The record gives the reactivity of an RNA of 177 nucleotides to DMS and 2A3. The RNA was probed in 150 mM KOAc, 10 mM MgCl2 and 150 mM bicine (pH 8.5) at 24 C. It was measured as part of the RMDB library M2PK50. 2A3 adducts were read by reverse transcription with SuperScript II with manganese. Values are in units of 0.01, from 0 to 300, in steps of 10.
[RMDB]
RNA sequence: GGGAACGACUCGAGUAGAGUCGAAAACAUCAUCCCUUCGGGGAUGAUGAAAGAUCGAAAGAUCAGGCUUACCGUAAUAAGCCAAAAUACGAGCGAUACGCAAAAGACCUGUGUUCGCACAGGUCAAGACAUUUGAACGGUUCGCCGUUCAAAUGUCAAAAGAAACAACAACAACAAC
Reactivity to DMS in 0.01 (KOAc 150mM, MgCl2 10mM, bicine 150mM(pH8.5), 24C), signal-to-noise 1, nucleotides 027 to 126: c000a010u000c000a010u010c000c000c010u000u000c180g020g010g030g010a000u000g090a010u000g000a060a070a060g010a010u030c020g010a080a140a110g000a050u000c000a170g040g000c000u000u000a030c090c110g020u000a050a250u000a010a010g020c010c000a060a030a070a120u020a060c100g000a080g020c070g000a120u000a080c090g000c100a050a060a060a100g010a030c010c000u010g000u010g000u010u000c140g000c010a000c000a000g040g000u000c020a020a030
Reactivity to 2A3 in 0.01 (KOAc 150mM, MgCl2 10mM, bicine 150mM(pH8.5), 24C), signal-to-noise 2, nucleotides 027 to 126: c000a000u000c000a000u010c000c020c040u020u050c200g060g000g000g010a000u000g000a000u010g010a010a000a000g010a000u010c010g020a060a020a000g000a010u010c020a030g000g000c000u010u010a020c020c080g090u060a070a080u020a060a060g010c000c000a000a070a000a060u150a050c040g020a030g040c030g060a120u090a220c050g000c070a030a170a000a000g010a010c000c000u000g000u010g010u000u100c060g000c030a000c010a000g000g020u000c000a000a000